[RMDB]
RNA sequence: GGGAACGACUCGAGUAGAGUCGAAAAUUCUACAUAAUGGUUAUUGAAUACUCCACAAUAUAUUAAGUCUAGAUGUUAUGGUACAUGCAUACACUUUCAGGCUGUUUUAUACCCACUGUCACCAAUACACAUAAAUGGGGGAGGAAAAGCUAUGAAACGAUUAAGCUCAAUUCGUUGAGCUUAAUCGAAAAGAAACAACAACAACAAC
Reactivity to 2A3 in 0.01 (KOAc 150mM, MgCl2 10mM, bicine 150mM(pH8.5), 24C), signal-to-noise 4, nucleotides 027 to 156: u050u000c030u080a120c020a080u180a090a080u090g050g010u120u090a080u120u100g070a090a060u100a160c030u030c040c020a060c030a200a020u130a010u020a030u140u090a080a010g020u000c060u060a060g030a090u050g020u070u030a030u060g010g050u080a060c030a070u130g040c000a000u050a050c040a020c080u050u130u100c020a010g000g020c010u000g050u020u060u010u050a050u060a050c000c010c020a040c070u050g030u070c020a020c050c040a080a030u100a100c040a010c030a100u190a170a090a040u050g020g010g000g010g010a020g000g000a010a070a020a030g020c010u050a060u220g080a110a110a000
Reactivity to DMS in 0.01 (KOAc 150mM, MgCl2 10mM, bicine 150mM(pH8.5), 24C), signal-to-noise 2, nucleotides 027 to 156: u000u000c040u000a120c050a130u000a110a100u000g020g000u000u010a100u000u020g020a130a090u000a050c030u000c010c040a050c040a130a070u000a050u000a080u010u010a040a050g020u000c010u020a060g010a050u010g000u000u000a050u010g020g040u000a110c130a050u000g040c010a070u000a020c050a020c060u000u000u000c050a040g050g040c000u000g000u000u010u010u000a060u000a070c030c000c000a050c060u010g020u000c020a080c050c050a010a110u000a080c050a060c040a100u000a050a060a130u000g010g000g010g000g010a050g030g010a050a020a040a100g000c060u000a070u000g010a060a110a200
Chemical mapping of a 207-nucleotide RNA with 2A3 and DMS.
DMS adducts were read by reverse transcription with MarathonRT.
The reactions ran in a buffer of 150 mM KOAc, 10 mM MgCl2 and 150 mM bicine (pH 8.5), at 24 C.
For 2A3 the reverse transcriptase was SuperScript II with manganese.